Background:
Structure probing data (DMS) for a 177-nucleotide construct. For DMS the reverse transcriptase was MarathonRT. The RNA was probed in 150 mM KOAc, 10 mM MgCl2 and 150 mM bicine (pH 8.5) at 24 C.

RNA sequence: GGGAACGACUCGAGUAGAGUCGAAAAUUAGCUUAUUACGAACCUGUGCAGGGUCGUAAAAUGCUGAUGGCUCUUCUUUCUGAUAAUGCCUAUCUCAAAUGGGCGCGUGUUGAAGGUAAGGACGGAUUACAUAGAGACCGUUCGCGGUCUCUAUGUAAAAAGAAACAACAACAACAAC
Reactivity to DMS in 0.01 (KOAc 150mM, MgCl2 10mM, bicine 150mM(pH8.5), 24C), signal-to-noise 1, nucleotides 027 to 126: u000u010a000g020c000u000u010a300u000u010a000c010g010a040a040c000c010u000g050u000g000c220a110g050g000g010u000c000g030u000a010a010a040a080u010g010c000u000g010a030u000g020g030c000u000c030u000u000c020u000u000u020c020u030g020a050u010a030a070u010g010c010c010u020a040u010c130u020c300a020a090a090u010g030g000g010c010g010c270g040u010g000u010u000g010a050a080g000g020u000a010a030g000g020a040c060g000g010a200u000